Chemical mapping of a 207-nucleotide RNA with 2A3 and DMS. 2A3 adducts were read by reverse transcription with SuperScript II with manganese. For DMS, 2,300 sequencing reads were counted. It was measured as part of the RMDB library M2RFPK. The 2A3 profile rests on 2,436 reads.
[RMDB]
RNA sequence: GGGAACGACUCGAGUAGAGUCGAAAAGGGGCUGACAGGAAUCGACAGUAGAGUGUAUCAUGUCAGUAGGCAUGCCGGGGAAUGGUGGUUUACCCCGUUAUCAAAUGAUUACCGACCAAUAAUUGGCUUAGCUCGUUGGGCUUCGGCCCAACGAGAACAUUAGACGUUCCUUCGGGAACGUCUAAUGAAAAGAAACAACAACAACAAC
Reactivity to 2A3 in 0.01 (KOAc 150mM, MgCl2 10mM, bicine 150mM(pH8.5), 24C), signal-to-noise 4, nucleotides 027 to 156: g020g000g010g020c020u030g010a010c010a030g000g090a070a080u140c060g050a050c040a030g100u170a050g060a060g050u130g020u050a070u110c040a040u050g020u010c010a030g090u080a050g040g000c020a020u080g040c030c010g000g000g000g010a000a100u070g010g010u010g020g040u040u030u070a060c000c000c000c000g040u040u010a040u030c020a020a020a050u050g020a040u080u030a010c020c030g090a090c040c070a050a020u210a110a090u130u040g050g030c020u060u100a030g030c000u000c010g000u000u000g010g000g020c000u030u040c190g080g000c000c000c000a000a000c000g000a000g000a000a000
Reactivity to DMS in 0.01 (KOAc 150mM, MgCl2 10mM, bicine 150mM(pH8.5), 24C), signal-to-noise 1, nucleotides 027 to 156: g010g000g000g040c040u000g010a120c080a110g000g010a060a070u000c040g020a050c040a100g030u000a130g010a120g000u000g050u000a180u010c050a050u010g010u000c020a100g010u010a040g020g030c000a140u010g030c120c040g000g000g010g040a080a130u010g020g020u000g020g030u000u000u010a190c010c000c000c000g010u040u000a090u020c300a060a060a070u010g010a100u000u000a030c010c000g000a060c020c010a040a070u000a070a100u000u000g000g010c030u020u000a200g000c000u000c000g020u020u000g020g000g010c020u010u000c300g060g030c010c000c000a000a010c010g010a010g030a050a100